The record gives the reactivity of an RNA of 170 nucleotides to 2A3 and DMS. Source: RMDB library 15KLIB, as collected in RNAgym. Values are in units of 0.01, from 0 to 300, in steps of 10. Conditions: 150 mM KOAc, 10 mM MgCl2 and 150 mM bicine (pH 8.5), 24 C.
[RMDB]
RNA sequence: GGGAACGACUCGAGUAGAGUCGAAAAGCUUUCUGUGUUAAAUGCCAUAAUGAUAUAUUGGCAGCAACAGACCCCAGUGAGGCUUUCGAGAAAUUCGUAAGUCUCUUUGCUACUUUAAUGACUUUUUGUAACGUGAGCUUCGGCUCACGUAAAAGAAACAACAACAACAAC
Reactivity to 2A3 in 0.01 (KOAc 150mM, MgCl2 10mM, bicine 150mM(pH8.5), 24C), signal-to-noise 3, nucleotides 027 to 129: g020c000u040u070u060c000u030g010u020g070u110u140a070a100a040u020g000c000c000a000u020a080a110u300g260a040u050a010u020a050u300u020g010g000c020a010g000c000a080a010c000a000g000a030c010c020c010c000a020g040u020g000a000g000g000c000u000u000u020c030g050a040g040a070a300a140u190u000c000g020u000a000a000g020u000c000u000c000u000u060u020g020c000u020a060c020u120u190u150a090a070u120g150a110c040u030u040u030u030u160g150u090a020
Reactivity to DMS in 0.01 (KOAc 150mM, MgCl2 10mM, bicine 150mM(pH8.5), 24C), signal-to-noise 3, nucleotides 027 to 129: g020c100u000u000u000c020u000g010u030g020u030u030a100a110a060u010g020c020c020a030u000a080a060u000g020a170u090a190u050a000u050u030g000g020c010a020g030c190a050a040c030a010g020a070c140c050c000c020a070g000u020g020a030g010g000c070u000u010u060c000g040a060g000a100a170a140u070u000c000g020u040a000a000g050u000c010u010c040u040u020u080g010c100u060a050c070u000u000u000a150a090u060g010a120c000u080u060u000u030u040g030u100a050